Conditions: 150 mM KOAc, 10 mM MgCl2 and 150 mM bicine (pH 8.5), 24 C. An RNA of 177 nucleotides, treated with 2A3 and DMS and read out base by base.
RNA sequence: GGGAACGACUCGAGUAGAGUCGAAAAACUAUUUGUUCUAUAGCAAACAAACCCGAAACACAGGAUAUAUUUGUUAUAUAUGCUUUGUGGAACACAGCUGUUAGGACUUGAGCCAUCAGGGUCCAAAGAUACUAUGACGCUUCGGCGUCAUAGUAUCAAAAGAAACAACAACAACAAC
Reactivity to 2A3 in 0.01 (KOAc 150mM, MgCl2 10mM, bicine 150mM(pH8.5), 24C), signal-to-noise 3, nucleotides 027 to 126: a010c090u140a180u120u040u090g020u010u030c010u040a050u090a120g030c030a040a000a090c020a020a080a040c020c000c010g030a050a130a000c070a000c000a000g070g040a010u000a000u000a030u000u120u150g060u290u020a000u000a010u000a000u070g200c000u140u110u080g000u000g060g020a070a010c080a010c020a110g020c030u030g030u140u080a040g030g010a040c020u020u130g060a010g040c030c000a050u030c020a050g030g000g000u000c010c000a020a020a010
Reactivity to DMS in 0.01 (KOAc 150mM, MgCl2 10mM, bicine 150mM(pH8.5), 24C), signal-to-noise 2, nucleotides 027 to 126: a050c090u010a110u000u000u000g050u010u000c090u000a040u020a020g060c060a100a050a090c240a040a120a110c000c010c020g000a130a080a050c050a020c130a040g010g000a010u000a000u000a000u010u010u100g010u010u060a110u030a070u000a000u000g020c030u000u010u000g000u000g000g000a100a100c070a030c150a060g000c110u000g000u060u030a140g010g020a010c020u000u000g000a080g020c100c000a050u020c040a020g020g000g030u010c020c040a000a110a120